[RMDB]
RNA sequence: GGGAACGACUCGAGUAGAGUCGAAAAGAUAUGGACAGACAAGGGAGUCGGUAGUCGGAAACGACUACCCGACGAGGAUCUUGUUGUCCUAAGUCAAAAGUUGGCGUACUCUUCGGAGUACGCCAACCGGUUGUAUAUGGUUCGCCAUAUACAACCGAAAAGAAACAACAACAACAAC
Reactivity to 2A3 in 0.01 (KOAc 150mM, MgCl2 10mM, bicine 150mM(pH8.5), 24C), signal-to-noise 2, nucleotides 027 to 126: g000a000u000a000u020g000g000a000c050a070g190a060c000a060a010g020g000g010a040g020u000c000g000g010u010a000g000u000c010g000g010a050a000a000c010g000a000c020u000a010c060c130c050g010a010c000g040a140g000g010a000u000c000u010u000g010u010u010g000u000c010c000u000a010a010g010u010c010a000a000a050a290g020u010u000g000g000c000g000u000a000c010u010c020u060u140c300g090g010a010g000u000a000c010g010c010c000a000a000c010
Reactivity to DMS in 0.01 (KOAc 150mM, MgCl2 10mM, bicine 150mM(pH8.5), 24C), signal-to-noise 5, nucleotides 027 to 126: g000a010u000a010u020g000g000a010c000a040g010a030c010a010a010g000g010g000a010g020u000c010g010g010u000a000g010u000c000g030g000a000a010a020c000g010a020c000u000a000c300c120c060g020a000c000g010a080g020g010a020u010c010u000u000g000u000u000g010u000c000c000u000a000a080g000u000c010a080a100a100a140g010u000u000g010g010c000g020u000a000c000u000c010u000u010c250g020g000a020g010u000a000c010g020c000c000a000a000c000
Source: RMDB library TTRDES, as collected in RNAgym. An RNA of 177 nucleotides, treated with 2A3 and DMS and read out base by base. The reactions ran in a buffer of 150 mM KOAc, 10 mM MgCl2 and 150 mM bicine (pH 8.5), at 24 C. Reactivities are rounded to 0.1 and cut off at 0 and 3. For DMS the reverse transcriptase was MarathonRT. High 2A3 reactivity points to a flexible backbone, as in loops and unpaired stretches. For DMS, 13,081 sequencing reads were counted.